Structure probing data (2A3 and DMS) for a 177-nucleotide construct.
[RMDB]
RNA sequence: GGGAACGACUCGAGUAGAGUCGAAAAGAUAUGGAUCUCCUUGGGAGCAUGUACUCGGAAACGAGUAUUAAUGCGAGGAUCAAGAAGAUCCUAAGUCAAAAGUAUCCACUGUUCGCAGUGGAUACAAUCUUCACCUAUCGUUCGCGAUAGGUGAAGAAAAAGAAACAACAACAACAAC
Reactivity to 2A3 in 0.01 (KOAc 150mM, MgCl2 10mM, bicine 150mM(pH8.5), 24C), signal-to-noise 1, nucleotides 027 to 126: g000a000u000a020u070g000g000a010u030c010u000c030c000u000u010g010g010g020a020g000c000a010u050g020u010a000c010u020c010g000g000a000a000a010c000g000a000g050u050a000u000u240a130a030u000g000c000g130a230g000g040a010u010c000a010a010g020a000a000g010a000u050c010c000u020a000a000g010u000c030a000a060a030a240g040u010a010u000c010c000a000c000u000g060u110u100c300g080c200a000g020u010g000g000a000u010a000c000a000a030
Reactivity to DMS in 0.01 (KOAc 150mM, MgCl2 10mM, bicine 150mM(pH8.5), 24C), signal-to-noise 1, nucleotides 027 to 126: g020a030u000a020u020g010g010a000u000c000u010c030c000u000u010g000g010g020a020g030c010a010u010g010u000a010c000u000c010g000g010a000a000a010c010g010a030g000u000a000u010u020a130a060u000g010c010g000a080g020g030a000u010c010a020a040g000a000a000g010a020u000c000c020u010a000a100g000u000c010a110a070a140a200g010u000a000u000c000c000a020c010u000g000u040u020c300g030c010a000g040u000g020g010a010u010a000c010a060a090
Overview:
For DMS the reverse transcriptase was MarathonRT. Reactivities are given for positions 27 through 126. For 2A3 the reverse transcriptase was SuperScript II with manganese. It was measured as part of the RMDB library TTRDES. DMS (dimethyl sulfate) methylates the pairing face of unpaired adenines and cytosines.